[RMDB]
RNA sequence: GGGAACGACUCGAGUAGAGUCGAAAAACUACUUCGGUAGUAUCCGCGCGUACUACUGCUUUUGACGUGCUUUGAUCUAUGUUGCCACUCCCAAAUAGGAGUGGGCACUCAUAGGGAGCACGAUAAGCAGUAUCGCACAACUAGCUUUCGAGCUAAAAAAUUAUAGCUCCUUCGGGAGCUAUAAUUUAAAAGAAACAACAACAACAAC
Reactivity to 2A3 in 0.01 (KOAc 150mM, MgCl2 10mM, bicine 150mM(pH8.5), 24C), signal-to-noise 2, nucleotides 027 to 156: a000c000u010a000c010u050u040c150g180g030u010a000g010u030a090u070c020c000g110c030g020c000g020u070a090c060u000a000c000u010g080c010u060u060u000u110g150a090c050g000u000g010c020u290u210u060g050a080u030c000u000a000u000g000u000u020g050c060c000a010c010u020c020c000c020a120a300a170u250a060g010g000a000g000u080g010g010g010c030a040c070u060c000a010u000a000g030g000g020a010g040c010a000c000g000a010u020a000a000g010c010a000g000u000a030u130c010g010c010a000c000a090a000c050u050a030g000c020u050u110u090c190g030a000g000c150u230a060a140a050
The data come from the RNA Mapping Database (RMDB), library RNAMAK. This 207-nucleotide RNA was probed chemically with 2A3. The reactions ran in a buffer of 150 mM KOAc, 10 mM MgCl2 and 150 mM bicine (pH 8.5), at 24 C. The 2A3 profile rests on 726 reads. Values cover nucleotides 27 to 156.